The data come from the RNA Mapping Database (RMDB), library OK2TST. Chemical mapping of a 177-nucleotide RNA with 2A3 and DMS. For DMS, 812 sequencing reads were counted.
RNA sequence: GGGAACGACUCGAGUAGAGUCGAAAACAAUUCGGAGCUGCAAUACGUUAGCUACCGUCUUGGUGAGCCAGUAUUUGACGUCAAAGAGUGCCAGAUCCGUGGUGUGACUUAUUCCGCACCGCUGCGCGCGUUGGGUACGGUUCGCCGUACCCAACGCAAAAGAAACAACAACAACAAC
Reactivity to 2A3 in 0.01 (KOAc 150mM, MgCl2 10mM, bicine 150mM(pH8.5), 24C), signal-to-noise 1, nucleotides 027 to 126: c020a020a010u040u030c000g000g010a010g000c030u030g000c010a080a300u170a300c100g060u120u060a020g030c000u180a300c000c010g010u030c010u010u030g000g010u050g030a010g010c000c030a000g030u020a130u000u050u130g070a030c030g000u020c050a020a090a030g120a060g000u050g100c000c040a010g020a130u100c050c010g020u050g010g010u000g020u010g000a020c010u090u160a100u260u000c010c000g000c000a020c000c010g070c050u100g040c010g000c020
Reactivity to DMS in 0.01 (KOAc 150mM, MgCl2 10mM, bicine 150mM(pH8.5), 24C), signal-to-noise 1, nucleotides 027 to 126: c180a090a130u000u010c020g000g000a060g000c020u000g000c030a120a150u000a150c270g000u030u000a000g000c000u000a070c000c000g000u000c070u010u000g000g010u020g010a130g010c070c050a160g040u020a050u010u000u000g000a030c070g010u000c100a100a080a190g010a100g020u010g020c100c020a050g040a050u020c000c130g010u010g000g000u010g000u000g020a130c210u000u020a160u000u020c130c010g020c010a020c040c010g020c030u000g010c230g030c140